[RMDB]
Chemical mapping of a 207-nucleotide RNA with 2A3. The RNA was probed in 150 mM KOAc, 10 mM MgCl2 and 150 mM bicine (pH 8.5) at 24 C. The 2A3 profile rests on 1,425 reads.
RNA sequence: GGGAACGACUCGAGUAGAGUCGAAAACGCUGGGAGCUGAGUGUGUGAGGAUGAACUACCUGAAGCGCGCACGGGCAUCCCUGAAUCACACAUGGGCUCCUGUGCUGAAGCGCGCACGGCAACCGAAAGGUGCGAAAGAUGUGGUUCGCCACAUCAACCGUCAGAGUAAGUUCGCUUACUCUGACGGAAAAGAAACAACAACAACAAC
Reactivity to 2A3 in 0.01 (KOAc 150mM, MgCl2 10mM, bicine 150mM(pH8.5), 24C), signal-to-noise 2, nucleotides 027 to 156: c010g000c000u030g020g010g000a000g010c020u110g080a050g180u000g010u000g020u040g050a060g010g050a050u040g030a130a140c140u210a090c140c000u030g040a200a080g010c000g020c000g000c020a010c000g030g020g020c020a060u040c040c000c000u000g280a020a090u140c010a010c000a000c000a030u090g150g060g050c000u000c010c000u000g020u010g000c000u080g010a070a010g000c000g000c010g000c010a010c020g050g000c020a030a030c010c000g060a070a030a030g050g000u040g000c020g030a160a150a030g000a000u000g020u000g020g020u080u050c200g030c050c000a000c000a000u000c000a000a040